[RMDB]
RNA sequence: GGGAACGACUCGAGUAGAGUCGAAAAGAUACGUAGUGUGAUAAUACAGAGGAAUGUUUCAAACCAGAGACAUACAUUAACUGGUAAUUAUACUCUAAUACUUGCACUGUCAAAUAUGGUAGUCCUACUAGUAGGUCGGUUUCGACCGACCUACUAGAAAAGAAACAACAACAACAAC
Reactivity to DMS in 0.01 (KOAc 150mM, MgCl2 10mM, bicine 150mM(pH8.5), 24C), signal-to-noise 1, nucleotides 027 to 126: g010a140u000a070c110g000u000a040g010u000g010u000g030a040u000a150a070u010a060c240a040g000a090g040g000a100a060u020g030u000u030u020c110a050a060a110c180c140a090g010a100g010a050c110a060u010a130c120a110u010u000a090a090c070u040g000g020u000a040a060u000u000a060u000a090c000u000c010u000a050a040u020a060c160u000u000g010c110a020c050u020g000u000c130a060a090a080u000a060u000g000g000u000a050g000u010c000c000u000a120
Reactivity to 2A3 in 0.01 (KOAc 150mM, MgCl2 10mM, bicine 150mM(pH8.5), 24C), signal-to-noise 1, nucleotides 027 to 126: g060a000u130a020c030g000u010a030g030u000g020u000g000a000u100a100a060u160a020c110a020g000a010g110g040a120a080u090g060u080u120u060c140a150a060a030c000c000a000g000a000g010a050c050a090u110a080c030a060u130u030a020a080c030u000g050g010u030a040a080u100u030a030u040a030c000u000c000u020a030a060u030a210c040u000u110g040c050a000c050u080g050u100c040a000a090a150u100a050u060g130g000u030a080g100u070c060c000u070a090
About this RNA: The record gives the reactivity of an RNA of 177 nucleotides to DMS and 2A3. The reactions ran in a buffer of 150 mM KOAc, 10 mM MgCl2 and 150 mM bicine (pH 8.5), at 24 C.